[RMDB]
RNA sequence: GGGAACGACUCGAGUAGAGUCGAAAAGUGAGAGGCGGCAGACCACGCCGAAGCAGGUCACACAGCCCGGAGGCUGAUGAGGUGUUGGAUCGCAGGCCCCUCUCUCGCGGUCUCUCUCGUCUCUGCCGUCUCUAUCUGUGUCUGUCUCUGUCUCUCACUCGUAAUUACGUUUCGACGUAAUUACGAGAAAAGAAACAACAACAACAAC
Reactivity to 2A3 in 0.01 (KOAc 150mM, MgCl2 10mM, bicine 150mM(pH8.5), 24C), signal-to-noise 2, nucleotides 027 to 156: g210u160g080a050g000a000g010g020c060g000g000c020a010g000a020c030c080a070c180g000c000c010g000a000a000g000c220a030g020g020u140c070a040c020a010c020a220g030c000c050c030g000g080a040g020g000c060u060g020a010u040g000a010g130g190u100g040u250u280g040g000a010u010c030g030c070a050g090g060c090c110c030c000u000c030u010c000u000c100g030c000g010g000u000c000u000c000u000c000u000c050g000u000c010u000c000u020g040c020c010g020u000c010u000c020u000a020u010c020u020g000u000g050u020c030u020g100u030c020u030c010u060g050u020c010u010c000u000c040a010
Source: RMDB library OK3TST, as collected in RNAgym. Chemical mapping of a 207-nucleotide RNA with 2A3. 2A3 adducts were read by reverse transcription with SuperScript II with manganese. High 2A3 reactivity points to a flexible backbone, as in loops and unpaired stretches. The RNA was probed in 150 mM KOAc, 10 mM MgCl2 and 150 mM bicine (pH 8.5) at 24 C.